RNA sequence: GGGAACGACUCGAGUAGAGUCGAAAAAUACAGCGUAAUCGAGCGGAGGAAAACGGCACUCCGAAAUUCCGGUACGAUUAUGAUCCCACUGCGUCGACGCUAGAUGCAGAACCGGAUUGCCGAGGAAUAGCUUAAAAGUGUUCGCACUUUUAAGCUAAAAAGAAACAACAACAACAAC
Reactivity to 2A3 in 0.01 (KOAc 150mM, MgCl2 10mM, bicine 150mM(pH8.5), 24C), signal-to-noise 3, nucleotides 027 to 126: a000u150a020c080a040g100c040g050u050a020a020u080c020g020a040g090c020g020g050a020g020g080a050a160a050a030c010g000g010c020a000c040u040c020c000g020a040a010a020u100u010c010c000g040g070u080a100c020g010a020u100u000a030u120g060a030u020c010c010c010a020c020u020g010c000g010u020c010g050a070c090g040c290u100a010g000a020u010g000c000a000g060a070a040c030c000g040g000a010u040u060g030c010c020g000a010g030g030a140a160
Reactivity to DMS in 0.01 (KOAc 150mM, MgCl2 10mM, bicine 150mM(pH8.5), 24C), signal-to-noise 4, nucleotides 027 to 126: a070u000a110c190a070g010c030g020u010a020a040u000c010g000a190g020c060g010g000a090g010g000a060a030a130a150c050g010g010c050a030c110u000c010c010g010a060a040a110u000u000c000c010g010g010u000a100c050g010a030u000u010a020u000g010a100u000c010c000c000a280c040u000g010c010g020u000c010g010a140c230g020c180u000a060g010a030u000g000c010a010g000a120a060c180c010g000g010a040u000u000g000c010c010g020a140g010g010a110a120

This 177-nucleotide RNA was probed chemically with 2A3 and DMS.
For 2A3, 2,869 sequencing reads were counted.
DMS adducts were read by reverse transcription with MarathonRT.
DMS (dimethyl sulfate) methylates the pairing face of unpaired adenines and cytosines.
Source: RMDB library M2PK90, as collected in RNAgym.